This 177-nucleotide RNA was probed chemically with DMS and 2A3. For DMS, 16,068 sequencing reads were counted.
RNA sequence: GGGAACGACUCGAGUAGAGUCGAAAACACACAAGGUUCGCCUUGUGUGCAAGAAUAGACGAAUACUACCCUAGAAGUAUUCAGGUCACAUAACUACGGAAAUGGCGUUCUGCUUCGGCAGAACGAAUCAAAUAAUUACUUUCGAGUAAUUAUUUGAAAAAGAAACAACAACAACAAC
Reactivity to DMS in 0.01 (KOAc 150mM, MgCl2 10mM, bicine 150mM(pH8.5), 24C), signal-to-noise 9, nucleotides 027 to 126: c010a010c000a000c000a020a000g000g020u000u010c240g030c000c010u000u000g010u000g020u000g010c080a080a070g000a140a110u010a090g010a060c080g000a020a010u000a010c000u000a090c070c060c060u000a090g010a100a040g010u000a010u000u000c010a090g010g010u000c040a110c140a070u000a060a090c100u000a090c120g020g010a070a070a100u010g000g010c010g010u000u000c000u000g010c000u000u020c190g030g000c000a010g000a000a000c010g000a030a070
Reactivity to 2A3 in 0.01 (KOAc 150mM, MgCl2 10mM, bicine 150mM(pH8.5), 24C), signal-to-noise 9, nucleotides 027 to 126: c010a000c000a000c000a010a000g040g010u040u070c130g120c050c000u000u000g000u000g000u000g000c010a040a040g080a090a080u150a170g040a020c020g010a010a000u000a010c010u040a050c010c020c040u100a140g060a170a000g070u010a010u020u000c040a030g230g000u020c030a030c030a140u170a220a080c080u150a050c130g110g080a090a100a110u150g150g000c000g000u000u000c000u000g000c000u020u060c160g090g000c000a000g000a000a000c000g010a000a010

2A3 adducts were read by reverse transcription with SuperScript II with manganese. The RNA was probed in 150 mM KOAc, 10 mM MgCl2 and 150 mM bicine (pH 8.5) at 24 C. It was measured as part of the RMDB library M2PK50.